Structure probing data (2A3 and DMS) for a 177-nucleotide construct.

RNA sequence: GGGAACGACUCGAGUAGAGUCGAAAAAGCGACGUACGCGUCGCAAUGUGCCGCUUCGAGGUAAACAUCGGCUUACUGAAGUCUCUUAGUAAGGUCAGUGGGCCUGUUUCCCUCACAGAGACACAAAGGAAUGAUCUAAAUUCGUUUAGAUCAUUCCAAAAGAAACAACAACAACAAC
Reactivity to 2A3 in 0.01 (KOAc 150mM, MgCl2 10mM, bicine 150mM(pH8.5), 24C), signal-to-noise 9, nucleotides 027 to 126: a000g000c000g000a010c010g010u070a010c250g010c010g100u000c000g000c000a000a070u030g000u010g010c020c040g040c050u040u070c090g000a010g000g000u010a010a000a000c010a050u190c140g000g000c000u000u020a010c000u010g030a040a030g160u040c000u000c020u080u100a120g030u280a130a010g020g010u010c000a000g000u010g000g010g000c000c000u000g000u000u000u000c010c000c000u000c000a010c010a000g020a000g000a010c000a000c010a040a060a030
Reactivity to DMS in 0.01 (KOAc 150mM, MgCl2 10mM, bicine 150mM(pH8.5), 24C), signal-to-noise 7, nucleotides 027 to 126: a100g020c000g000a010c010g020u010a100c250g030c010g010u000c010g010c000a020a020u000g010u010g010c010c010g010c020u010u020c270g000a020g010g010u000a010a010a010c020a040u030c160g010g000c000u000u000a010c010u000g010a020a050g000u020c010u010c020u020u010a120g010u020a060a010g000g000u000c010a020g010u000g000g000g000c010c010u000g010u000u000u000c070c000c000u000c020a070c200a030g000a040g000a030c010a010c040a050a120a120
2A3 adducts were read by reverse transcription with SuperScript II with manganese.
Values cover nucleotides 27 to 126.